[RMDB]
RNA sequence: GGGAACGACUCGAGUAGAGUCGAAAACAGGCGCAAGCUGCGAAGCUUCACCCAGAAUGACCAGUUCGUCCUUCUCGCGCGAAAUAUCGAGAACCGGAUGCACGACCAUGAAAAUCUGGCUGGUAUACCUUUUAGUAGUAUUCGUACUACUAAAAGGAAAAGAAACAACAACAACAAC
Reactivity to 2A3 in 0.01 (KOAc 150mM, MgCl2 10mM, bicine 150mM(pH8.5), 24C), signal-to-noise 9, nucleotides 027 to 126: c020a020g090g000c030g010c080a030a030g010c010u030g030c040g050a040a010g000c010u050u030c020a050c010c020c010a020g070a100a110u160g040a080c030c020a020g020u030u070c010g010u020c010c000u020u000c010u000c010g010c000g010c020g090a090a110a070u280a070u090c020g000a010g010a040a050c100c060g010g010a010u030g020c030a020c060g050a040c030c020a060u120g090a080a060a010a110u040c030u010g030g000c020u010g000g040u070a060u090a130
Reactivity to DMS in 0.01 (KOAc 150mM, MgCl2 10mM, bicine 150mM(pH8.5), 24C), signal-to-noise 9, nucleotides 027 to 126: c110a100g010g020c060g020c160a030a040g020c010u000g010c250g000a170a060g010c010u000u000c050a110c240c010c050a100g010a090a060u000g000a070c050c020a110g010u000u000c030g010u000c010c020u000u000c000u000c010g030c230g010c120g010a080a090a120u010a070u010c010g000a040g010a020a040c140c150g010g000a030u000g010c120a040c070g010a100c060c030a040u010g000a090a050a080a120u000c050u000g000g000c050u000g010g010u000a100u010a140